[RMDB]
An RNA of 177 nucleotides, treated with 2A3 and DMS and read out base by base. The 2A3 profile rests on 1,223 reads. The reactions ran in a buffer of 150 mM KOAc, 10 mM MgCl2 and 150 mM bicine (pH 8.5), at 24 C. DMS (dimethyl sulfate) methylates the pairing face of unpaired adenines and cytosines. For 2A3 the reverse transcriptase was SuperScript II with manganese. Values cover nucleotides 27 to 126.
RNA sequence: GGGAACGACUCGAGUAGAGUCGAAAAGCUGGGGUUUGACAGGCGCACCUGGUAUUGGAAAAACAUUAUUGUGUGCUGAGAUGAUGAGUUACAUAAUAGCUCACACUAUGCCAGUCGAGCGCGUCGAAGCACUAUGUCUCUUCGGAGACAUAGUGCUAAAAGAAACAACAACAACAAC
Reactivity to 2A3 in 0.01 (KOAc 150mM, MgCl2 10mM, bicine 150mM(pH8.5), 24C), signal-to-noise 1, nucleotides 027 to 126: g020c010u020g000g000g000g060u080u020u110g060a010c010a070g000g060c010g000c020a020c000c000u030g030g040u070a040u020u110g060g000a020a000a020a110a040c050a040u080u080a130u180u180g040u000g000u000g070c060u020g050a080g030a210u150g000a060u050g070a010g050u080u090a030c020a080u170a120a010u020a080g000c000u000c010a000c020a030c000u040a010u050g000c000c010a000g020u100c050g050a010g090c040g050c030g000u020c010g030a060
Reactivity to DMS in 0.01 (KOAc 150mM, MgCl2 10mM, bicine 150mM(pH8.5), 24C), signal-to-noise 2, nucleotides 027 to 126: g010c050u000g000g000g000g000u020u010u010g000a060c100a050g000g030c000g030c040a070c070c050u000g000g040u010a050u020u010g050g010a060a030a120a080a140c180a040u020u000a110u000u010g000u000g010u000g000c030u000g020a070g020a110u000g030a160u000g000a050g040u000u010a020c040a070u010a050a110u020a040g000c020u000c030a080c090a000c030u000a040u010g000c030c000a010g020u000c160g010a090g000c020g020c050g070u030c020g000a040